[RMDB]
RNA sequence: GGGAACGACUCGAGUAGAGUCGAAAAUGGUCGCCUAGUGCGCGCGCUCUCCUAUUGACUUUAGCUUCUCACCAUAGGUCGGAAGACAAUUUUGUUUUGUCCGCGCACUGUUUUGUCUCCAGUGCGCGUCAGCUGCACUGUUCGCAGUGCAGCUGACAAAAGAAACAACAACAACAAC
Reactivity to DMS in 0.01 (KOAc 150mM, MgCl2 10mM, bicine 150mM(pH8.5), 24C), signal-to-noise 2, nucleotides 027 to 126: u030g010g000u020c050g040c010c010u020a070g010u040g040c080g000c110g000c040g010c040u020c040u010c040c010u000a060u040u000g000a080c060u020u030u020a150g000c020u000u010c000u020c090a130c030c160a080u010a070g000g010u000c040g010g000a070a020g000a010c080a030a100u040u050u000u030g020u000u000u000u000g020u030c060c060g020c000g000c010a040c000u010g010u020u000u020u020g010u030c040u000c230c020a000g000u010g000c010g000c030
Reactivity to 2A3 in 0.01 (KOAc 150mM, MgCl2 10mM, bicine 150mM(pH8.5), 24C), signal-to-noise 6, nucleotides 027 to 126: u130g020g000u070c010g010c010c010u110a120g040u110g130c030g040c000g000c020g030c040u000c010u000c030c000u050a110u080u120g070a090c020u110u090u120a050g040c010u030u040c040u030c020a070c030c030a160u080a090g100g000u020c040g060g060a060a040g020a040c020a070a120u070u080u030u130g120u030u050u030u050g030u040c030c040g000c000g000c000a000c000u010g040u010u050u090u100g050u010c030u010c020c000a010g000u000g000c000g000c000